[RMDB]
RNA sequence: GGGAACGACUCGAGUAGAGUCGAAAAAGUGGCAUAGAAAGUUUUAACAAUGAAACUGAAGAUGUUAUUGCGCGGUCGCAGGUACCUGUAGAACAAAAUGGCUGCUCGGGCGGUGACCUUGUAGUCAUAACUAAUGCCCGUUCGCGGGCAUUAGUUAAAAAGAAACAACAACAACAAC
Reactivity to 2A3 in 0.01 (KOAc 150mM, MgCl2 10mM, bicine 150mM(pH8.5), 24C), signal-to-noise 2, nucleotides 027 to 126: a000g070u030g050g010c000a000u030a100g140a040a060a000g000u020u010u020u020a290a090c170a060a080u120g060a000a070a050c020u070g010a040a010g070a030u060g020u120u000a090u040u130g020c060g000c010g000g000u050c010g050c000a030g000g120u060a060c000c000u060g020u070a050g110a290a060c050a040a150a040a040u100g000g040c000u000g000c000u000c020g000g010g010c060g220g000u120g010a120c000c000u020u060g020u040a020g040u030c010a030
Reactivity to DMS in 0.01 (KOAc 150mM, MgCl2 10mM, bicine 150mM(pH8.5), 24C), signal-to-noise 3, nucleotides 027 to 126: a060g010u020g000g010c000a070u010a030g010a070a080a010g010u000u000u020u000a070a190c300a150a100u020g000a010a030a040c000u000g000a100a180g000a020u010g000u000u010a030u010u000g030c110g000c100g000g000u010c030g010c040a030g010g030u060a030c070c050u050g000u000a100g010a120a080c160a060a080a170a080u030g010g000c020u010g000c000u000c070g000g000g000c080g000g000u000g000a090c020c020u000u010g020u010a020g010u000c040a080

Conditions: 150 mM KOAc, 10 mM MgCl2 and 150 mM bicine (pH 8.5), 24 C. This 177-nucleotide RNA was probed chemically with 2A3 and DMS. For 2A3 the reverse transcriptase was SuperScript II with manganese.